[RMDB]
RNA sequence: GGGAACGACUCGAGUAGAGUCGAAAAAAUAUCCUGCGGUUGAGUUGCAGACCGGGUGGGUCGUUCACCGAUCCACUGUAGGGCCGGUGACUCAGAACGUGGCCGUUAAUUCGAAACCCGGCCCAGGCAUCUGUGCCUACUUCGGUAGGCACAGAUGAAAAGAAACAACAACAACAAC
Reactivity to DMS in 0.01 (KOAc 150mM, MgCl2 10mM, bicine 150mM(pH8.5), 24C), signal-to-noise 1, nucleotides 027 to 126: a030a120u000a030u000c020c000u000g000c080g000g070u020u010g000a060g020u000u000g010c060a200g000a030c050c010g040g030g040u000g020g010g030u000c010g000u000u000c290a100c260c010g000a000u000c000c010a010c020u000g020u000a050g010g000g000c010c000g000g020u010g010a030c110u090c030a030g010a000a080c110g000u020g020g000c140c010g000u000u000a090a160u000u000c120g010a100a180a110c140c120c000g000g000c010c000c100a060g020g000
Structure probing data (DMS) for a 177-nucleotide construct. Reactivities are rounded to 0.1 and cut off at 0 and 3.